The record gives the reactivity of an RNA of 177 nucleotides to 2A3 and DMS. Reactivities are rounded to 0.1 and cut off at 0 and 3. The data come from the RNA Mapping Database (RMDB), library OK2TST. The RNA was probed in 150 mM KOAc, 10 mM MgCl2 and 150 mM bicine (pH 8.5) at 24 C. For 2A3 the reverse transcriptase was SuperScript II with manganese.

RNA sequence: GGGAACGACUCGAGUAGAGUCGAAAAUAACGAUGGAGAGUGUGUUCUAGCUUAUAGCGACUAGAUCGAAACAAGCAUAUUGGGACCUUGAGAUGGCACUGAUUUUUCCUUCACAUGUCAGCAGCCAGACCCUUGUAGGAUUCGUCCUACAAGGGUCAAAAGAAACAACAACAACAAC
Reactivity to 2A3 in 0.01 (KOAc 150mM, MgCl2 10mM, bicine 150mM(pH8.5), 24C), signal-to-noise 2, nucleotides 027 to 126: u100a050a040c020g030a030u100g080g020a050g000a010g060u060g010u010g010u110u010c030u060a030g030c030u140u080a060u060a220g100c000g000a050c010u050a080g050a160u020c040g050a040a010a070c040a080a010g000c020a050u010a160u190u090g030g030g030a040c000c030u030u070g070a080g000a080u100g030g000c030a020c030u040g030a080u020u000u110u130u000c030c000u110u160c060a100c020a090u130g020u000c000a000g000c010a010g030c000c010a000
Reactivity to DMS in 0.01 (KOAc 150mM, MgCl2 10mM, bicine 150mM(pH8.5), 24C), signal-to-noise 3, nucleotides 027 to 126: u020a130a100c120g010a070u020g030g010a100g010a090g030u020g010u020g010u000u010c010u000a040g000c030u020u020a170u000a070g000c060g020a050c040u010a050g010a110u000c050g010a060a050a110c150a040a070g010c030a090u020a150u000u020g020g020g000a070c030c030u010u010g020a130g050a130u000g020g020c020a160c030u000g000a040u000u000u020u000u000c020c020u000u000c070a040c140a070u010g000u010c010a020g000c030a110g020c030c080a090